[RMDB]
RNA sequence: GGGAACGACUCGAGUAGAGUCGAAAAGAUUUUUGAGGCAAGGGUAAAGUUACCAAGUUUAAGAUAACACAGUCCACCUUCUGAUAAUCACCAUUACAGUGUGGAACGUAUCCUUCCCAACUUUGUUCUCUGCAUUCAUAUAUACUUGUCUGUGCAACACUACCGUCACUUUCGAGUGACGGUAGUGAAAAGAAACAACAACAACAAC
Reactivity to DMS in 0.01 (KOAc 150mM, MgCl2 10mM, bicine 150mM(pH8.5), 24C), signal-to-noise 1, nucleotides 027 to 156: g050a180u000u000u000u010u050g000a200g020g000c070a090a090g030g000g050u020a030a020a060g010u000u000a130c020c000a010a100g010u000u010u000a090a210g050a060u010a030a040c000a300c080a140g010u010c030c010a010c030c020u000u000c020u020g030a190u010a070a070u000c070a250c080c090a120u010u010a080c020a140g030u000g010u020g040g070a080a050c050g010u000a050u000c050c060u000u000c010c030c030a060a130c010u010u000u000g010u000u000c060u000c020u000g000c030a090u010u000c100a050u000a060u010a110u000a040c070u000u000g000u000c030u000g000u010g030c000a090a170
Reactivity to 2A3 in 0.01 (KOAc 150mM, MgCl2 10mM, bicine 150mM(pH8.5), 24C), signal-to-noise 3, nucleotides 027 to 156: g020a010u090u070u030u100u120g090a110g020g020c040a010a050g020g050g000u070a100a030a080g030u030u060a070c060c020a070a050g050u030u120u150a110a030g030a110u130a070a060c120a010c080a080g060u000c010c000a020c010c000u110u150c020u030g080a070u060a060a020u160c080a050c160c050a040u010u130a030c010a050g000u000g020u000g200g000a020a000c010g050u040a030u030c010c000u000u000c000c000c000a090a000c000u060u070u020g020u090u010c000u010c070u060g030c010a040u020u160c070a040u160a020u090a040u040a250c040u120u100g050u040c130u100g070u090g010c030a080a020